[RMDB]
Structure probing data (DMS and 2A3) for a 177-nucleotide construct. The data come from the RNA Mapping Database (RMDB), library M2PK50. As a SHAPE reagent, 2A3 marks flexible, mostly unpaired nucleotides at the ribose 2'-OH. Values are in units of 0.01, from 0 to 300, in steps of 10. For DMS, 1,764 sequencing reads were counted. The RNA was probed in 150 mM KOAc, 10 mM MgCl2 and 150 mM bicine (pH 8.5) at 24 C. For 2A3, 1,418 sequencing reads were counted.
RNA sequence: GGGAACGACUCGAGUAGAGUCGAAAAUUCAGCGCAUUCGUGCGCUGAAAAGCUGUUCAACGCAUGUACAGAAAACAAAACAAAAACAAAACAAAAAGCGUAGCAGGGUUCUUUUCGAAGAACCCAAUUGAGAUACGUAUUUCGAUACGUAUCUCAAAAAAGAAACAACAACAACAAC
Reactivity to DMS in 0.01 (KOAc 150mM, MgCl2 10mM, bicine 150mM(pH8.5), 24C), signal-to-noise 2, nucleotides 027 to 126: u000u000c000a030g030c000g020c000a020u010u000c130g020u000g030c000g000c000u010g000a000a000a050a120g010c030u000g010u000u000c040a070a090c030g030c030a080u000g010u000a010c020a030g000a090a020a080a120c130a020a050a030a120c150a040a090a050a050a060c070a040a050a050a080c030a050a050a050a040a150g000c030g040u020a060g030c200a150g000g010g010u000u000c000u000u010u020u000c160g000a020a010g000a000a010c000c000c000a030a010
Reactivity to 2A3 in 0.01 (KOAc 150mM, MgCl2 10mM, bicine 150mM(pH8.5), 24C), signal-to-noise 1, nucleotides 027 to 126: u020u010c000a000g010c000g000c000a000u020u060c130g110u100g040c000g000c000u010g010a000a000a000a000g030c000u020g000u050u050c060a090a050c040g000c030a070u100g000u080a020c000a010g050a050a080a030a010c040a010a090a030a030c070a040a160a050a040a010c010a050a080a000a000c000a000a090a000a080a030g030c020g030u030a050g150c080a090g030g030g000u000u000c010u030u010u060u150c230g070a000a000g000a000a010c000c000c000a000a000